[RMDB]
RNA sequence: GGGAACGACUCGAGUAGAGUCGAAAAAUACACACCUGGAGCAUGAACCUCGCCGACGCAGGGCCGUGCCUCGAGACCCUCGACGCCCUCGUGGAUGAGGGCAAGAUCCGUACCUACGGCUGGAGCAGUACCACCCUGAAUUCGUUCAGGGUGGUACAAAAGAAACAACAACAACAAC
Reactivity to 2A3 in 0.01 (KOAc 150mM, MgCl2 10mM, bicine 150mM(pH8.5), 24C), signal-to-noise 2, nucleotides 027 to 126: a010u160a000c020a010c000a010c030c010u020g050g040a020g040c050a080u090g040a030a040c010c010u010c080g010c020c030g160a070c040g010c040a020g000g020g000c000c020g010u050g000c020c010u030c010g070a060g080a130c020c060c000u000c010g060a010c110g030c000c000c030u010c000g000u070g120g120a130u250g000a000g000g020g000c000a000a000g020a030u060c010c020g030u060a120c010c020u060a040c000g000g020c000u050g000g020a070g020c040a010
Reactivity to DMS in 0.01 (KOAc 150mM, MgCl2 10mM, bicine 150mM(pH8.5), 24C), signal-to-noise 2, nucleotides 027 to 126: a080u010a160c130a100c100a100c130c010u000g000g000a100g000c100a080u010g000a040a140c070c040u000c020g030c050c030g000a040c060g050c110a060g030g000g040c060c050g000u030g000c090c020u000c020g000a120g010a130c050c010c030u000c030g030a130c140g020c010c010c000u000c040g020u000g010g010a160u030g010a010g010g000g010c020a060a070g000a030u010c020c030g010u000a070c080c100u000a040c020g000g000c110u000g000g020a120g020c140a110
Structure probing data (2A3 and DMS) for a 177-nucleotide construct. The DMS profile rests on 1,373 reads.